[RMDB]
RNA sequence: GGGAACGACUCGAGUAGAGUCGAAAAUUGAACAAGAUGGUGGGCACCAGGUUCACACAGAUGUAGAAGAACAGCACGGUCAGAUUACUGGGGUGGCGCGCGCCCAGGAGGUAGCUGGUGACCAUGCGUAUGCAUGGGGGUUCGCCCCCAUGCAUACAAAAGAAACAACAACAACAAC
Reactivity to 2A3 in 0.01 (KOAc 150mM, MgCl2 10mM, bicine 150mM(pH8.5), 24C), signal-to-noise 6, nucleotides 027 to 126: u100u080g020a050a020c040a100a090g140a160u210g050g040u040g010g050g010c030a020c020c000a020g050g040u090u100c050a030c010a000c000a100g110a130u140g050u140a050g020a260a030g030a070a040c020a040g010c020a010c060g060g020u060c050a030g020a150u070u170a130c020u030g000g000g000g030u050g040g020c010g000c000g020c020g020c010c000c000a000g030g010a030g050g050u040a020g040c020u000g020g020u010g020a010c010c010a020u050g030c030
Reactivity to DMS in 0.01 (KOAc 150mM, MgCl2 10mM, bicine 150mM(pH8.5), 24C), signal-to-noise 4, nucleotides 027 to 126: u020u030g010a090a060c080a090a070g000a100u010g010g030u010g000g000g000c040a070c040c020a040g020g010u010u010c030a100c110a080c070a070g010a080u020g020u020a060g000a080a110g010a060a030c100a110g000c050a050c050g000g000u010c060a050g000a090u020u030a090c050u010g000g000g010g010u010g010g010c040g000c040g000c030g000c020c010c000a050g010g000a080g010g010u010a050g020c030u010g000g010u010g000a040c030c010a040u010g000c140
Conditions: 150 mM KOAc, 10 mM MgCl2 and 150 mM bicine (pH 8.5), 24 C. The record gives the reactivity of an RNA of 177 nucleotides to 2A3 and DMS. For 2A3, 5,981 sequencing reads were counted. For DMS the reverse transcriptase was MarathonRT. It was measured as part of the RMDB library OK1LIB.